[RMDB]
RNA sequence: GGGAACGACUCGAGUAGAGUCGAAAAGGUUCGCGUGGCCAGUCUCGAGGGGCUGGUCGUCAAACCCCCAACAGCGGUCAUAGGGGGCGAGACGGUCCAAGGAGACCAACAGGCGAUGACCGCCAAAGUAAAUACGGACUUUCGAGUCCGUAUUUACAAAAGAAACAACAACAACAAC
Reactivity to 2A3 in 0.01 (KOAc 150mM, MgCl2 10mM, bicine 150mM(pH8.5), 24C), signal-to-noise 2, nucleotides 027 to 126: g080g010u090u080c030g000c060g130u100g010g000c020c000a020g010u000c010u010c030g090a210g000g020g000g000c000u020g000g000u020c000g000u000c000a000a020a010c010c000c000c010c010a010a020c050a040g030c020g000g020u010c000a010u030a040g010g000g000g000g030c000g000a020g010a000c020g000g020u050c020c000a090a190g230g010a220g030a020c000c010a040a060c030a050g180g000c070g080a030u010g010a010c000c000g020c020c010a050a100a000
Reactivity to DMS in 0.01 (KOAc 150mM, MgCl2 10mM, bicine 150mM(pH8.5), 24C), signal-to-noise 4, nucleotides 027 to 126: g020g000u000u010c040g000c090g010u000g010g000c010c030a030g010u010c010u000c030g000a200g020g010g000g000c040u000g020g020u010c000g000u000c030a010a150a180c010c000c010c010c020a070a070c210a140g040c020g010g000u000c010a030u000a270g000g000g010g000g010c030g000a240g010a010c100g010g010u010c000c030a210a140g010g000a140g010a040c000c020a100a090c090a100g020g000c050g000a080u000g010a020c020c000g010c000c300a060a040a130